RNA sequence: GGGAACGACUCGAGUAGAGUCGAAAAGAAGAGAGGAAGAUUUAGGGGAAGAAGAUAACAAUAUUCACGCGGUCUUCCCAGUUACGUGUGUAGACACUAUGAUUGUUAUCAAAACUAAAUAUGAGAAGCGUAUACCAUCGUUCGCGAUGGUAUACGCAAAAGAAACAACAACAACAAC
Reactivity to DMS in 0.01 (KOAc 150mM, MgCl2 10mM, bicine 150mM(pH8.5), 24C), signal-to-noise 1, nucleotides 027 to 126: g040a040a040g000a140g040a140g000g010a040a060g060a060u000u040u000a060g000g000g040g000a090a060g000a100a140g000a020u000a000a030c000a000a040u000a040u050u060c000a120c000g030c120g020g000u020c070u000u000c000c000c000a080g000u060u090a040c180g060u000g050u000g000u010a070g000a080c060a050c240u010a140u060g000a020u000u000g000u000u000a000u000c020a060a040a050a020c020u000a000a110a020u040a010u050g000a090g000a110a150
Reactivity to 2A3 in 0.01 (KOAc 150mM, MgCl2 10mM, bicine 150mM(pH8.5), 24C), signal-to-noise 2, nucleotides 027 to 126: g060a010a010g080a000g040a010g000g000a030a090g010a000u030u020u030a050g050g100g030g000a000a020g030a160a000g000a030u070a070a020c040a140a000u010a030u110u000c000a000c010g020c030g000g040u000c020u090u050c030c000c000a000g020u050u180a010c030g000u100g030u000g010u040a040g120a230c000a050c070u070a120u300g060a000u010u000g020u000u000a050u000c020a000a000a000a140c050u050a000a000a000u160a050u050g060a000g140a210a000
Chemical mapping of a 177-nucleotide RNA with DMS and 2A3. For DMS the reverse transcriptase was MarathonRT. Source: RMDB library OK1LIB, as collected in RNAgym.